[RMDB]
RNA sequence: GGGAACGACUCGAGUAGAGUCGAAAAGAUAUGGAACACGGGAUGGGAGUCGUGGAUCGGAAACGAUCCAUACGACGAGGAUCAUUUGUGUUCCUAAGUCAAACUAUGCUGCUUCGGCAGCAUAGAAGAUCACUAGAGGGUUCGCCCUCUAGUGAUCAAAAGAAACAACAACAACAAC
Reactivity to 2A3 in 0.01 (KOAc 150mM, MgCl2 10mM, bicine 150mM(pH8.5), 24C), signal-to-noise 2, nucleotides 027 to 126: g000a010u020a010u060g000g000a020a000c000a000c040g160g080g120a030u050g020g040g090a140g010u000c000g010u030g000g020a010u010c000g010g000a010a010a000c000g000a000u010c010c010a000u180a060c040g010a000c000g040a160g050g100a040u030c000a000u040u120u230g000u000g000u000u000c000c000u010a010a010g000u000c010a050a080a130c010u000a010u000g000c000u000g020c000u070u050c300g170g000c020a000g000c000a000u000a000g010a010a020
Reactivity to DMS in 0.01 (KOAc 150mM, MgCl2 10mM, bicine 150mM(pH8.5), 24C), signal-to-noise 2, nucleotides 027 to 126: g000a030u000a100u000g010g000a020a000c010a010c010g030g000g010a030u000g000g020g000a180g010u000c000g010u000g000g010a010u000c000g000g000a030a020a050c000g010a000u000c010c000a070u000a030c090g020a010c000g030a190g010g010a090u010c010a010u010u000u020g020u000g000u000u000c000c000u000a000a080g000u000c020a120a150a290c000u000a000u000g000c000u000g000c010u000u040c300g030g020c000a010g000c010a000u000a000g010a130a100